[RMDB]
RNA sequence: GGGAACGACUCGAGUAGAGUCGAAAAGAUAUGGAUCCGAGUGGCGAGCGUAUCGGAAACGAUCACGCGAUGAGCCAUCCGGAUCCUAAGUCAAACUCGCGUUUCGUGUUCGCACGAAACGCGAGAAGGUUCAUUAACUGUUCGCAGUUAAUGAACCAAAAGAAACAACAACAACAAC
Reactivity to DMS in 0.01 (KOAc 150mM, MgCl2 10mM, bicine 150mM(pH8.5), 24C), signal-to-noise 2, nucleotides 027 to 126: g000a040u000a300u010g000g010a000u010c010c000g000a060g020u000g000g030c020g040a200g000c000g010u000a020u000c010g000g000a070a090a170c000g000a010u000c210a000c000g000c000g010a150u010g000a300g020c020c000a010u000c030c020g000g000a000u000c010c000u000a030a030g000u010c010a100a080a230c010u000c000g020c000g000u000u000u000c000g030u000g000u010u000c200g000c010a010c000g010a020a000a010c000g020c010g030a000g000a060a060
Reactivity to 2A3 in 0.01 (KOAc 150mM, MgCl2 10mM, bicine 150mM(pH8.5), 24C), signal-to-noise 1, nucleotides 027 to 126: g030a010u040a010u160g010g000a000u000c020c000g010a030g020u010g010g000c080g000a040g040c000g010u000a000u000c000g000g010a060a070a030c000g000a000u080c180a030c000g020c030g070a230u200g130a030g000c020c000a000u020c010c000g000g000a000u000c000c010u000a010a000g000u010c040a000a000a160c000u010c000g000c000g000u030u050u010c030g000u010g070u070u080c300g040c110a030c030g000a060a010a020c030g020c010g000a000g010a000a000